Structure probing data (2A3) for a 207-nucleotide construct. It was measured as part of the RMDB library RNAMAK. The 2A3 profile rests on 916 reads.
RNA sequence: GGGAACGACUCGAGUAGAGUCGAAAAUAGCACCUUUCGAGGUGCUAAAAAAACCUUUGUGUACGAAGAACUAUAGGAGAGGAUCGUCCCAUUGGGACGAUCUCCCCACCUCCAUAGGGAGUACACUCUGGUAAAAAGGAUAACUUCGGUUAUCCAAUCUGAGUUCUUAGUUCGCUAAGAACUCAGAAAAAGAAACAACAACAACAAC
Reactivity to 2A3 in 0.01 (KOAc 150mM, MgCl2 10mM, bicine 150mM(pH8.5), 24C), signal-to-noise 1, nucleotides 027 to 156: u050a000g000c000a000c000c000u000u090u130c300g120a020g030g000u010g000c040u030a000a000a000a000a010a000a000c020c020u010u000u000g000u000g000u000a000c020g060a300a030g050a080a050c000u000a020u070a220g000g010a020g000a010g040g000a000u010c000g000u020c000c000c110a110u220u300g000g000g010a000c010g000a000u060c000u050c010c000c000c000a000c000c000u000c000c000a000u010a000g000g040g020a010g020u010a000c000a000c010u000c000u000g000g010u070a010a050a050a000a110g000g000a010u010a010a000c000u040u070c270g060g000u010u000a000u000c000c000a000a020